[RMDB]
Source: RMDB library TTRDEL, as collected in RNAgym. This 177-nucleotide RNA was probed chemically with DMS and 2A3. The RNA was probed in 150 mM KOAc, 10 mM MgCl2 and 150 mM bicine (pH 8.5) at 24 C. The 2A3 profile rests on 2,728 reads. As a SHAPE reagent, 2A3 marks flexible, mostly unpaired nucleotides at the ribose 2'-OH.
RNA sequence: GGGAACGACUCGAGUAGAGUCGAAAAGAUAUGGAACCACACAGGGAGAUGCUCGGAAACGAGUCAUCGAAGAACUGUAUGGUUCCUAAGUCAAAGGUUCACAAGUAGUUCGCUACUUGUGAACCAACGGUCUUCUUUAGUUCGCUAAAGAAGACCGAAAAGAAACAACAACAACAAC
Reactivity to DMS in 0.01 (KOAc 150mM, MgCl2 10mM, bicine 150mM(pH8.5), 24C), signal-to-noise 1, nucleotides 027 to 126: g000a060u030a300u010g000g000a010a010c020c010a010c000a000c010a010g000g000g010a160g010a010u000g000c000u010c010g010g000a030a050a150c000g010a010g000u010c000a000u000c020g010a070a160g000a110a110c000u000g010u010a030u000g020g000u000u000c000c040u000a000a030g010u010c060a160a110a100g010g000u010u000c000a000c010a000a000g000u000a000g020u000u010c250g020c030u010a000c000u000u010g020u000g000a000a000c010c000a000a010
Reactivity to 2A3 in 0.01 (KOAc 150mM, MgCl2 10mM, bicine 150mM(pH8.5), 24C), signal-to-noise 1, nucleotides 027 to 126: g020a000u070a030u150g030g000a000a000c000c000a000c020a020c010a020g140g060g000a040g010a020u000g000c010u020c020g050g060a050a070a050c000g010a000g250u290c020a010u010c030g050a070a030g060a040a040c010u000g000u000a020u010g020g000u000u030c000c000u020a050a010g020u020c030a090a030a150g000g000u000u000c010a020c000a000a000g000u000a000g000u070u080c300g040c150u000a000c000u000u000g000u010g010a000a000c000c010a000a000